RNA sequence: GGGAACGACUCGAGUAGAGUCGAAAAACACCAAAACUGAAAACGGAAGGCAAUCCUUCCACGAUGAUACUUACUUUCCUUUGAUCGUCGUUACUACUGGCAUAGCCACAAAGGAGAACAAACAUGAGCGCGGACACUGACUUCGGUCAGUGUCCAAGUCACUAUGUUCCUUCGGGAACAUAGUGACAAAAGAAACAACAACAACAAC
Reactivity to 2A3 in 0.01 (KOAc 150mM, MgCl2 10mM, bicine 150mM(pH8.5), 24C), signal-to-noise 3, nucleotides 027 to 156: a000c090a100c020c020a040a060a040a050c150u200g100a110a070a030a090c070g010g010a000a010g020g000c150a040a210u220c000c020u000u010c000c000a000c000g010a010u040g000a000u080a160c070u070u030a000c010u050u160u040c010c000u000u000u050g010a020u030c010g040u000c010g040u060u080a050c060u050a040c030u030g040g000c060a250u070a200g030c000c010a060c020a040a010a030g060g010a020g050a100a020c030a060a120a030c050a090u200g070a090g040c100g020c040g030g020a000c000a000c000u000g010a000c000u010u080c220g050g000u000c000a000g000u000g000u000c000c000a000a000

Annotation:
The record gives the reactivity of an RNA of 207 nucleotides to 2A3. The 2A3 profile rests on 1,757 reads. 2A3 adducts were read by reverse transcription with SuperScript II with manganese. It was measured as part of the RMDB library M2RFPK. Conditions: 150 mM KOAc, 10 mM MgCl2 and 150 mM bicine (pH 8.5), 24 C.